[RMDB]
Overview
An RNA of 177 nucleotides, treated with DMS and 2A3 and read out base by base. For DMS, 5,446 sequencing reads were counted. For DMS the reverse transcriptase was MarathonRT. The RNA was probed in 150 mM KOAc, 10 mM MgCl2 and 150 mM bicine (pH 8.5) at 24 C. It was measured as part of the RMDB library OK1LIB. Reactivities are rounded to 0.1 and cut off at 0 and 3.
RNA sequence: GGGAACGACUCGAGUAGAGUCGAAAAGAGGAAAUAGUGUCUCGGAGCGCGCAGAGUAAACAUAUAUGGUUCAUAUAUAACCGUAGGCACGUAAAGAAAGCGAGUAAGGCAGAGAGAACUGCCAGAACCAUAGUGCACGUUUCGACGUGCACUAUGGAAAAGAAACAACAACAACAAC
Reactivity to DMS in 0.01 (KOAc 150mM, MgCl2 10mM, bicine 150mM(pH8.5), 24C), signal-to-noise 3, nucleotides 027 to 126: g020a110g020g010a070a040a110u010a070g010u000g030u000c000u000c000g010g000a110g010c110g000c030g000c050a120g010a100g000u040a050a040a100c230a060u030a030u000a030u000g010g050u010u010c060a050u000a040u000a020u010a070a110c010c010g010u020a010g010g000c010a040c030g000u030a080a020a090g000a020a070a100g000c040g010a060g000u000a110a110g000g030c000a010g000a080g020a200g030a090a070c010u010g010c010c010a080g000a080a100
Reactivity to 2A3 in 0.01 (KOAc 150mM, MgCl2 10mM, bicine 150mM(pH8.5), 24C), signal-to-noise 5, nucleotides 027 to 126: g140a020g010g180a070a100a010u140a060g020u010g000u010c000u020c040g010g010a060g040c100g010c000g030c080a010g030a020g160u150a050a150a020c080a030u050a000u020a010u050g120g200u220u180c050a000u030a000u010a000u030a090a010c000c010g020u050a010g000g000c020a000c020g020u070a000a000a030g110a020a070a000g090c080g020a040g040u140a130a090g030g000c000a000g030a000g020a010g020a090a040c000u000g000c000c010a000g020a020a000